[RMDB]
Structure probing data (DMS and 2A3) for a 207-nucleotide construct.
RNA sequence: GGGAACGACUCGAGUAGAGUCGAAAAUACUUAGUACGCGCGUAGUUGCAGGCAUUCCGGGUGCAGCAACUGACGCGGAAGACUUUUCCCAGAGUGUGCGCGUCAACUGGCGUGCUGAGUAGUGCACGAAUUGCACGUACGUUCGCGUACGUGCAAAGAUAACAUUAAACUUCGGUUUAAUGUUAUCAAAAGAAACAACAACAACAAC
Reactivity to DMS in 0.01 (KOAc 150mM, MgCl2 10mM, bicine 150mM(pH8.5), 24C), signal-to-noise 4, nucleotides 027 to 156: u000a030c040u000u000a030g030u010a050c030g010c010g030c050g030u010a060g030u000u000g000c010a150g010g000c000a050u000u000c020c300g010g040g130u000g000c020a300g010c010a010a030c010u000g010a030c020g020c020g010g020a040a150g000a100c070u000u000u000u000c010c010c030a300g010a070g020u000g000u000g030c010g010c040g000u000c040a090a130c110u020g000g020c000g040u000g020c000u000g010a040g010u000a090g010u000g000c040a060c050g010a110a190u000u000g000c000a020c020g010u010a000c010g000u000u000c300g010c030g030u000a010c010g000u000g000c010a000a010a080
Reactivity to 2A3 in 0.01 (KOAc 150mM, MgCl2 10mM, bicine 150mM(pH8.5), 24C), signal-to-noise 8, nucleotides 027 to 156: u050a000c010u010u010a000g000u010a010c010g020c030g020c030g110u040a010g010u010u010g000c030a100g120g000c010a020u100u110c130c200g210g030g000u020g000c010a020g000c000a010a010c010u050g100a030c000g000c010g010g010a010a010g100a040c010u110u100u050u050c000c000c010a010g010a010g010u070g010u020g030c010g000c000g030u020c030a210a180c170u110g040g000c000g000u000g000c000u000g000a010g010u040a020g020u040g040c030a010c060g070a110a160u050u020g000c000a000c000g000u000a000c000g010u020u060c240g000c000g070u000a000c000g000u000g000c000a000a000a000